This 177-nucleotide RNA was probed chemically with 2A3. The RNA was probed in 150 mM KOAc, 10 mM MgCl2 and 150 mM bicine (pH 8.5) at 24 C. 2A3 adducts were read by reverse transcription with SuperScript II with manganese.
RNA sequence: GGGAACGACUCGAGUAGAGUCGAAAAAGAAAAUAAUAUGAACAGGCAAAACGAAUGGUUCAUACGGCUGAAGACGUGGAGAGAUCGGCAGCAUUACUAUGAGGAGGUGAAGCCUGAGCACUACGAGCUCGGGACGACGGUUCGCCGUCGUCCCGAGAAAAGAAACAACAACAACAAC
Reactivity to 2A3 in 0.01 (KOAc 150mM, MgCl2 10mM, bicine 150mM(pH8.5), 24C), signal-to-noise 1, nucleotides 027 to 126: a000g190a040a000a000a040u300a040a060u120a090u120g020a000a020c020a040g130g050c080a150a230a000a000c070g050a120a000u070g040g010u040u060c020a000u050a020c080g190g020c000u080g020a010a000g000a150c050g010u070g050g020a060g000a000g000a000u040c000g040g060c000a000g000c080a060u130u000a030c000u000a040u050g040a000g030g000a000g060g030u140g020a150a000g000c000c000u010g000a000g020c030a060c110u300a110c010g020a000g020